[RMDB]
The record gives the reactivity of an RNA of 177 nucleotides to DMS and 2A3. Values cover nucleotides 27 to 126. For DMS the reverse transcriptase was MarathonRT. Source: RMDB library RFMREP, as collected in RNAgym. The 2A3 profile rests on 1,183 reads. For DMS, 1,442 sequencing reads were counted.
RNA sequence: GGGAACGACUCGAGUAGAGUCGAAAAGUGAUCGAAUAGAUCGGCGGAUGCUAUCCCGGAUGUGGCUCAUUCGUUAGCUUAUUAAGUAAAACAUUAGGGUGACUUAAUGGACAAAGUUAAUAAGAUCGGAUACCAUUCAGUUCGCUGAAUGGUAUCCAAAAGAAACAACAACAACAAC
Reactivity to DMS in 0.01 (KOAc 150mM, MgCl2 10mM, bicine 150mM(pH8.5), 24C), signal-to-noise 2, nucleotides 027 to 126: g000u000g000a000u000c020g000a200a100u010a140g000a010u000c000g010g000c030g010g020a040u000g060c200u000a150u010c020c010c050g010g040a120u000g020u000g040g000c260u020c040a080u000u000c010g000u010u010a120g010c020u000u000a000u000u000a010a030g000u000a060a100a050a100c010a020u010u000a000g000g000g020u010g010a190c000u000u000a000a000u000g000g000a170c150a100a090a180g010u000u000a020a000u000a010a000g000a080u000c170
Reactivity to 2A3 in 0.01 (KOAc 150mM, MgCl2 10mM, bicine 150mM(pH8.5), 24C), signal-to-noise 2, nucleotides 027 to 126: g030u060g010a000u020c010g020a120a180u080a240g010a050u020c020g000g000c010g010g000a010u060g010c040u080a080u200c050c030c020g100g050a260u220g040u150g050g000c060u000c040a040u030u020c030g000u010u090a040g050c020u010u020a010u020u000a020a080g150u190a030a020a000a030c000a000u010u030a000g030g010g010u030g050a020c010u030u010a020a000u000g000g000a010c080a010a100a000g000u000u000a000a000u010a030a020g070a130u180c050